[RMDB]
RNA sequence: GGGAACGACUCGAGUAGAGUCGAAAAGCUUCUAAUUCAAAAACCCAAUGUCCAUCCUCGUUUUGACGAUUUGCUAAGAUAUUUUGUGCCUGCAAAAUAGCACGAUCCAAUGCUUCGUCUUUUAUUGGUUACUCUCUGUAUUCGUACAGAGAGUAACAAAAGAAACAACAACAACAAC
Reactivity to DMS in 0.01 (KOAc 150mM, MgCl2 10mM, bicine 150mM(pH8.5), 24C), signal-to-noise 4, nucleotides 027 to 126: g000c100u010u000c050u020a060a110u010u000c070a100a050a060a140a100c030c010c010a080a090u000g010u000c030c030a080u000c010c030u000c100g000u010u010u010u000g010a050c020g010a060u000u010u010g000c030u000a300a150g000a060u000a050u010u010u010u000g010u000g000c010c080u000g000c160a050a050a080a050u010a080g010c020a060c040g010a030u000c020c030a040a100u000g010c020u010u000c050g010u000c010u000u000u000u010a150u020u020g020
Reactivity to 2A3 in 0.01 (KOAc 150mM, MgCl2 10mM, bicine 150mM(pH8.5), 24C), signal-to-noise 3, nucleotides 027 to 126: g010c010u090u000c040u150a200a190u140u120c090a060a050a050a090a110c030c010c000a020a040u080g030u000c010c010a030u030c010c030u040c040g080u080u070u080u190g020a010c010g010a040u070u030u230g000c010u040a060a020g030a100u030a140u130u150u090u120g020u020g040c020c030u060g020c030a040a060a070a050u070a070g010c030a010c040g000a020u000c010c020a030a090u050g010c010u020u030c020g020u000c040u000u070u030u020a100u030u070g060